[RMDB]
RNA sequence: GGGAACGACUCGAGUAGAGUCGAAAACGGAAGCAUUAAAACCAUUCGAGCUAGUCAAUGCGUGGCGUGUCUCUCCGCAACGUGUUGGCGAAUGUAAAGAGUGACUAAGCAUGUAGUACCGAGGAUGAUAAGAGCAAUUCGUUCGCGAAUUGCUCAAGAUCAAAUUAGCGUUCGCGCUAAUUUGAUCAAAAGAAACAACAACAACAAC
Reactivity to 2A3 in 0.01 (KOAc 150mM, MgCl2 10mM, bicine 150mM(pH8.5), 24C), signal-to-noise 4, nucleotides 027 to 156: c040g030g030a080a020g040c030a040u080u130a080a040a010a100c040c010a030u040u040c050g020a030g020c040u070a020g020u020c000a000a010u010g010c000g000u010g030g000c010g010u070g060u040c020u010c010u000c120c000g020c000a000a000c000g000u020g010u020u000g000g000c020g010a010a000u070g030u060a090a100a050g030a000g000u030g010a030c040u050a030a010g070c010a050u070g010u100a040g050u030a080c020c040g010a060g090g020a030u120g020a000u110a230a080g000a010g000c000a000a000u010u000c000g020u030u030c120g000c000g090a000a000u000u000g000c010u000c000a000a000
Reactivity to DMS in 0.01 (KOAc 150mM, MgCl2 10mM, bicine 150mM(pH8.5), 24C), signal-to-noise 1, nucleotides 027 to 156: c010g000g010a220a160g020c020a080u010u000a040a160a090a170c080c020a100u000u000c000g000a180g000c020u000a140g020u000c030a020a030u000g020c000g030u000g000g030c050g000u000g020u010c170u000c040u000c140c010g030c000a030a040c030g050u000g020u000u000g010g020c010g000a070a030u000g000u000a050a060a130g000a080g080u010g030a080c060u010a100a180g030c050a050u000g000u000a040g040u000a070c050c030g000a160g010g010a120u010g010a000u000a080a120g000a010g000c000a010a030u000u000c010g020u010u000c300g030c030g000a000a030u000u000g020c000u010c010a010a070

Notes
This 207-nucleotide RNA was probed chemically with 2A3 and DMS. The RNA was probed in 150 mM KOAc, 10 mM MgCl2 and 150 mM bicine (pH 8.5) at 24 C. It was measured as part of the RMDB library M2RFPK.